Structure probing data (DMS and 2A3) for a 207-nucleotide construct. For DMS, 8,377 sequencing reads were counted. Values cover nucleotides 27 to 156. 2A3 is a SHAPE reagent: it acylates the 2'-hydroxyl of flexible nucleotides of all four kinds. 2A3 adducts were read by reverse transcription with SuperScript II with manganese.

[RMDB]
RNA sequence: GGGAACGACUCGAGUAGAGUCGAAAAGUGUCUGCAGACGGCUGCAGUAGGAGGCAGAGUGAAGACCAGGCUGGUACUGUUUGCCAUUGCUAGGGGAAGUCUUUCCUAGUGGCUGCUUCCAGCUCGGCACAUUUAGACCUCAAGGAAAGAGGGACAAGCACGAUAUAAAUUUCGAUUUAUAUCGUGCAAAAGAAACAACAACAACAAC
Reactivity to DMS in 0.01 (KOAc 150mM, MgCl2 10mM, bicine 150mM(pH8.5), 24C), signal-to-noise 3, nucleotides 027 to 156: g020u010g000u000c020u020g020c020a030g010a140c140g030g040c020u010g020c030a050g000u010a040g000g030a070g010g040c070a220g000a110g010u010g020a100a130g010a300c010c010a100g020g020c030u000g000g010u000a040c110u010g010u000u000u010g000c010c010a180u010u010g010c060u000a060g000g010g010g000a070a230g030u000c010u000u000u000c030c020u000a070g030u000g010g020c020u000g010c020u000u000c010c000a070g030c010u000c020g000g010c030a040c060a060u010u000u010a060g000a150c030c000u000c020a090a100g000g020a050a050a130g010a060g000g010g000a070c070a080a300
Reactivity to 2A3 in 0.01 (KOAc 150mM, MgCl2 10mM, bicine 150mM(pH8.5), 24C), signal-to-noise 6, nucleotides 027 to 156: g040u030g040u020c010u020g010c020a020g050a100c070g100g070c030u030g000c030a030g060u080a070g050g030a030g010g010c070a030g010a020g050u050g030a070a040g030a060c010c000a010g020g030c010u020g020g040u110a120c050u060g090u140u300u160g000c000c010a050u060u220g030c010u020a030g010g010g010g030a100a120g100u020c060u040u050u010c000c000u000a010g010u040g140g000c000u010g000c000u040u000c010c000a000g000c020u030c030g000g000c010a000c000a050u080u090u040a050g030a090c000c010u020c030a040a010g070g030a060a030a020g030a020g020g010g010a020c020a060a060